[RMDB]
RNA sequence: GGGAACGACUCGAGUAGAGUCGAAAAGUCGGUGGCUUCAAAGAGUAUGUGCAGAAGGUCGAAGAGAUUGCAGCCACACCGCAUGGGCUUCUGGUCUUCCACAACGGGAUUAACUACGACGUCCCGGUCAAGGACAGCCUUUCGAGGCUGUCCUUGAAAAAGAAACAACAACAACAAC
Reactivity to DMS in 0.01 (KOAc 150mM, MgCl2 10mM, bicine 150mM(pH8.5), 24C), signal-to-noise 2, nucleotides 027 to 126: g030u000c040g000g020u010g000g000c050u000u000c100a050a100a170g010a080g000u110a120u010g000u000g050c130a160g000a100a030g010g000u000c030g020a030a170g000a030g020a060u070u000g030c050a070g000c040c110a080c190a210c160c120g060c040a080u000g030g000g040c040u030u030c020u020g000g000u000c000u000u000c010c000a020c030a060a080c000g000g020g010a060u000u010a110a180c050u020a150c030g000a150c130g020u000c000c000c000g000g000
Reactivity to 2A3 in 0.01 (KOAc 150mM, MgCl2 10mM, bicine 150mM(pH8.5), 24C), signal-to-noise 2, nucleotides 027 to 126: g010u010c000g060g050u120g040g030c000u120u110c130a040a240a040g080a070g080u230a230u200g020u060g000c010a040g060a070a040g020g020u030c030g020a040a000g040a030g010a100u040u120g110c070a000g060c020c050a040c040a040c080c000g070c150a110u040g140g000g000c000u020u030c030u080g010g000u000c000u040u030c040c000a030c030a140a000c000g010g020g000a010u050u050a110a040c040u070a060c070g050a000c020g010u000c010c000c000g000g050